[RMDB]
RNA sequence: GGGAACGACUCGAGUAGAGUCGAAAAGCUCGGCCUUUCGAGGCCGAGCAGACGCCGUUUGCCUAGGCUAUAGGCUAAAUUAAAACACAAGCAGAAACACAACUGCUGAACAUUUCGAUGUUCAGAAAUACUUUACUCUAUUCGUAGAGUAAAGUAUAAAAGAAACAACAACAACAAC
Reactivity to DMS in 0.01 (KOAc 150mM, MgCl2 10mM, bicine 150mM(pH8.5), 24C), signal-to-noise 5, nucleotides 027 to 126: g020c010u010c010g000g000c000c010u000u010u020c150g020a030g030g020c010c000g000a010g020c010a020g010a110c150g010c000c020g000u000u000u010g000c010c000u000a010g000g010c040u010a080u010a010g000g000c000u000a030a080a100u010u010a060a050a080a090c140a080c160a090a080g010c050a030g000a060a050a070c110a070c140a070a060c070u010g010c000u000g000a010a010c010a010u000u000u010c170g010a020u000g000u000u000c010a040g000a090a090
Reactivity to 2A3 in 0.01 (KOAc 150mM, MgCl2 10mM, bicine 150mM(pH8.5), 24C), signal-to-noise 4, nucleotides 027 to 126: g010c000u010c010g000g010c000c020u110u050u120c190g080a010g020g000c030c010g000a000g000c000a000g010a000c070g010c000c010g010u010u050u040g000c000c000u010a010g060g020c130u170a080u020a110g010g000c000u000a030a070a050u160u180a030a060a080a020c150a020c050a070a040g060c030a030g110a150a240a010c050a010c010a180a100c060u050g000c000u010g030a010a000c010a010u070u110u150c200g110a010u020g000u000u000c020a010g040a030a150